[RMDB]
RNA sequence: GGGAACGACUCGAGUAGAGUCGAAAAGAUAUGGACCCUGAGAGGCUACCCACCGUAUGAACUACGACCUAAACCAUCGGAAACGAUGGACAAUGUCGCAUACGAGGCCUCUCAGGGUCCUAAGUCACAAGGCAUUAUGGUUCGCCAUAAUGCCUUGAAAAGAAACAACAACAACAAC
Reactivity to DMS in 0.01 (KOAc 150mM, MgCl2 10mM, bicine 150mM(pH8.5), 24C), signal-to-noise 2, nucleotides 027 to 126: g030a040u000a300u000g000g020a030c010c000c000u000g020a030g020a040g030g020c010u020a090c090c090c140a300c260c000g000u010a000u000g000a060a090c160u000a300c020g000a010c000c130u000a130a290a060c000c000a000u000c000g000g000a150a060a190c010g000a020u000g020g010a030c120a150a290u000g010u000c010g000c010a030u000a010c000g000a090g030g000c000c000u000c000u000c010a020g000g000g000u000c000c010u000a000a090g010u000c000a210